[RMDB]
RNA sequence: GGGAACGACUCGAGUAGAGUCGAAAAGAUAUGGAACGGAGCAUCGAUCUCUUGGUCGGAAACGACCACGGGAGGGAGCUCCGUUCCUAAGUCAAAAGAAACGAGCAACUUCGGUUGCUCGUUUCAAGUAUAUAUCGAGGUUCGCCUCGAUAUAUACAAAAGAAACAACAACAACAAC
Reactivity to DMS in 0.01 (KOAc 150mM, MgCl2 10mM, bicine 150mM(pH8.5), 24C), signal-to-noise 4, nucleotides 027 to 126: g000a020u000a270u010g000g000a000a010c000g000g010a010g010c000a090u000c060g000a190u000c000u000c000u000u000g000g010u000c010g020g000a060a060a130c000g010a010c000c010a000c090g010g000g000a030g020g010g000a050g020c000u000c000c000g000u000u000c000c000u000a000a050g000u010c020a110a070a130a140g000a010a010a000c000g010a010g000c000a010a010c000u000u010c170g020g000u000u000g010c000u000c000g000u000u000u000c010a030a100

An RNA of 177 nucleotides, treated with DMS and read out base by base.
The RNA was probed in 150 mM KOAc, 10 mM MgCl2 and 150 mM bicine (pH 8.5) at 24 C.